This 177-nucleotide RNA was probed chemically with DMS and 2A3. Source: RMDB library OK2TRN, as collected in RNAgym. 2A3 adducts were read by reverse transcription with SuperScript II with manganese. DMS adducts were read by reverse transcription with MarathonRT. For DMS, 887 sequencing reads were counted.
RNA sequence: GGGAACGACUCGAGUAGAGUCGAAAAUCAGCUGAGCCCAGAUUACAUUUUGGACUCGAUUUGCGGCCCAGUAUGUUUCAGGCUGAAAACCUUGGUUUCAAUCAGGAAAAUGCAGCAAGCCGUGCGGGGAUCACGUAAGGUUCGCCUUACGUGAUCCAAAAGAAACAACAACAACAAC
Reactivity to DMS in 0.01 (KOAc 150mM, MgCl2 10mM, bicine 150mM(pH8.5), 24C), signal-to-noise 1, nucleotides 027 to 126: u000c090a080g000c160u010g010a040g010c000c000c000a040g000a060u010u020a130c240a130u010u000u000u000g000g000a040c010u010c060g020a120u000u000u000g000c040g010g000c020c000c030a160g050u000a050u000g000u000u020u000c050a020g010g010c110u000g000a040a020a080a050c040c110u030u010g020g030u000u020u000c110a050a060u020c040a040g000g000a020a040a020a090u010g010c030a010g000c190a100a190g010c000c010g030u000g060c110g010g000
Reactivity to 2A3 in 0.01 (KOAc 150mM, MgCl2 10mM, bicine 150mM(pH8.5), 24C), signal-to-noise 1, nucleotides 027 to 126: u070c000a000g120c040u110g020a010g050c000c000c000a000g010a060u140u160a070c080a170u060u010u020u100g030g080a040c010u040c070g120a220u010u000u260g030c030g010g040c000c000c000a020g050u060a050u140g130u000u080u040c050a010g060g010c020u000g000a010a000a060a060c020c000u090u190g140g000u050u100u200c080a040a060u020c010a030g000g020a050a080a000a000u070g070c030a000g020c000a010a100g000c000c000g010u020g000c060g050g050